[RMDB]
RNA sequence: GGGAACGACUCGAGUAGAGUCGAAAACACCGAUGGUGACAACCUGUCUCCGGUCAGCGUGCAAGGUUCUACCAGCGAGGUAACUGGCGACUCAGAUGUCGCUAUCACUACCACGGGGCGCGGUGCACAUGUAAAAUCUAUUCGUAGAUUUUACAUGAAAAGAAACAACAACAACAAC
Reactivity to DMS in 0.01 (KOAc 150mM, MgCl2 10mM, bicine 150mM(pH8.5), 24C), signal-to-noise 9, nucleotides 027 to 126: c070a100c040c030g020a090u010g010g020u000g000a060c130a070a090c080c070u000g010u000c020u000c040c030g000g010u000c100a080g010c090g010u000g000c060a120a090g010g010u000u000c080u000a070c030c020a120g010c040g010a070g010g010u000a030a070c180u000g000g010c020g010a020c010u000c140a150g010a120u010g010u000c000g000c000u000a010u010c140a100c100u000a040c030c020a140c050g000g000g000g010c070g020c040g010g010u000g010c100a220
Reactivity to 2A3 in 0.01 (KOAc 150mM, MgCl2 10mM, bicine 150mM(pH8.5), 24C), signal-to-noise 9, nucleotides 027 to 126: c040a020c000c030g060a110u130g010g050u040g020a030c030a060a110c040c050u050g040u040c010u000c020c010g050g060u090c050a050g060c030g070u040g010c040a130a110g040g000u110u060c030u090a060c000c010a020g050c020g050a050g010g030u020a040a030c040u030g010g000c000g010a010c010u040c170a130g040a270u200g030u010c000g000c000u000a010u020c010a010c020u040a020c000c020a020c030g020g000g010g000c050g000c020g020g030u030g020c040a030
Background
This 177-nucleotide RNA was probed chemically with DMS and 2A3. Reactivities are given for positions 27 through 126. For 2A3 the reverse transcriptase was SuperScript II with manganese. The RNA was probed in 150 mM KOAc, 10 mM MgCl2 and 150 mM bicine (pH 8.5) at 24 C.